[RMDB]
RNA sequence: GGGAACGACUCGAGUAGAGUCGAAAAGUGAAGAAGGCGCUGCUGCUAUGCAUGGUGGGCGGCGUCACUCGCCAGCUGCCCGACGGCAUGAAGAUCCGCGGCGACAUCCACGUCUGCCUCAUGGGCGGACGAUGUCUAUCUUCGGAUAGACAUCGUCAAAAGAAACAACAACAACAAC
Reactivity to DMS in 0.01 (KOAc 150mM, MgCl2 10mM, bicine 150mM(pH8.5), 24C), signal-to-noise 8, nucleotides 027 to 126: g000u010g010a090a080g010a130a110g010g010c020g010c010u000g010c020u000g010c050u010a050u000g020c130a080u000g010g020u010g000g010g020c000g020g010c010g040u000c090a040c100u000c050g000c040c040a210g010c050u000g000c020c010c020g010a110c100g000g010c040a050u000g010a140a090g010a100u000c090c120g010c070g010g000c040g000a050c080a090u000c050c070a070c070g010u000c030u000g000c000c010u000c170a100u010g000g000g010c030g000
Reactivity to 2A3 in 0.01 (KOAc 150mM, MgCl2 10mM, bicine 150mM(pH8.5), 24C), signal-to-noise 5, nucleotides 027 to 126: g030u040g060a080a080g020a090a090g070g000c010g000c010u020g000c010u020g030c030u060a030u150g100c110a090u140g020g050u090g080g040g010c000g000g000c000g000u020c000a020c010u020c010g030c020c020a060g010c020u050g000c010c000c020g050a070c040g010g000c020a030u110g090a060a040g060a120u040c050c020g000c020g040g000c000g010a030c010a040u070c030c010a070c030g020u000c040u090g010c010c000u070c030a150u270g050g000g010c010g020